[RMDB]
The record gives the reactivity of an RNA of 207 nucleotides to 2A3. The data come from the RNA Mapping Database (RMDB), library M2RFPK. The reactions ran in a buffer of 150 mM KOAc, 10 mM MgCl2 and 150 mM bicine (pH 8.5), at 24 C.
RNA sequence: GGGAACGACUCGAGUAGAGUCGAAAAACGGCUGGCUACGGCCAGCCGAAUCGGGCCAAAGGCAGUCGCCCGACGACACAGGCGAUCGUUCGCCCAAUCGCUGCACACGACUAUACGUAGUCGUGAAUUGAUCACGCAACCUUCGGGUUGCGUGAAAUCAUAAGCUAUCCUUCGGGAUAGCUUAUGAAAAAGAAACAACAACAACAAC
Reactivity to 2A3 in 0.01 (KOAc 150mM, MgCl2 10mM, bicine 150mM(pH8.5), 24C), signal-to-noise 1, nucleotides 027 to 156: a000c010g020g020c000u000g000g000c000u020a050c200g100g010c080c000a000g090c000c010g000a010a000u010c000g000g020g050c090c040a140a120a150g110g080c060a050g050u160c050g000c040c010c010g000a000c020g010a000c000a070c020a110g200g000c010g000a020u020c030g010u150u120c090g250c000c000c030a020a030u100c020g030c130u100g050c070a040c000a000c030g010a000c000u000a000u060a060c270g200u010a010g000u000c000g010u020g010a010a010u040u020g070a030u050c000a000c000g000c000a000a000c000c000u070u060c100g180g000g000u010u000g000c000g010u000g000a000a000a000